[RMDB]
RNA sequence: GGGAACGACUCGAGUAGAGUCGAAAAACAAAAAUGACGACGACGACGACGACGACGACGACAACGUAAAAAACAAUAAUAGUGAUGAUUACAAAUACGACGACGACGACGACGAUAACGACGAUAAUAUGAUUGUCGAUGACGAUGAGCAUAGAACUACUGUAAAACAAUUCGUUGUUUUACAGUAAAAAGAAACAACAACAACAAC
Reactivity to DMS in 0.01 (KOAc 150mM, MgCl2 10mM, bicine 150mM(pH8.5), 24C), signal-to-noise 3, nucleotides 027 to 156: a100c060a050a070a150a120a080u010g000a030c010g020a040c010g020a040c040g010a050c000g000a110c020g040a050c030g030a080c020g010a090c030g010a090c020a100a100c060g040u000a000a070a100a090a080a060c060a070a080u000a060a090u000a060g020u010g000a020u000g000a100u010u000a110c070a060a090a160u000a030c060g020a090c040g010a040c010g010a040c010g030a010c030g010a040c000g010a060u000a040a040c090g010a070c010g020a040u000a050a090u000a110u000g010a060u000u000g000u000c000g030a060u000g000a060c020g010a040u000g000a030g010c100a120u000a060g000a040a070c090
Reactivity to 2A3 in 0.01 (KOAc 150mM, MgCl2 10mM, bicine 150mM(pH8.5), 24C), signal-to-noise 8, nucleotides 027 to 156: a000c080a020a060a030a010a010u060g030a020c070g000a000c020g010a000c020g010a010c020g040a000c020g010a010c010g010a000c020g010a000c040g030a030c050a090a010c090g090u160a080a080a020a050a010a010c150a090a100u280a140a060u090a100g080u040g040a040u020g010a010u020u080a050c030a030a120a010u160a060c080g010a000c030g010a010c020g000a000c020g000a000c030g000a000c030g010a020u030a060a010c070g010a000c020g010a010u030a080a040u110a060u110g120a220u020u050g000u020c010g000a010u020g010a000c000g010a010u010g010a010g020c050a070u070a140g080a050a010c020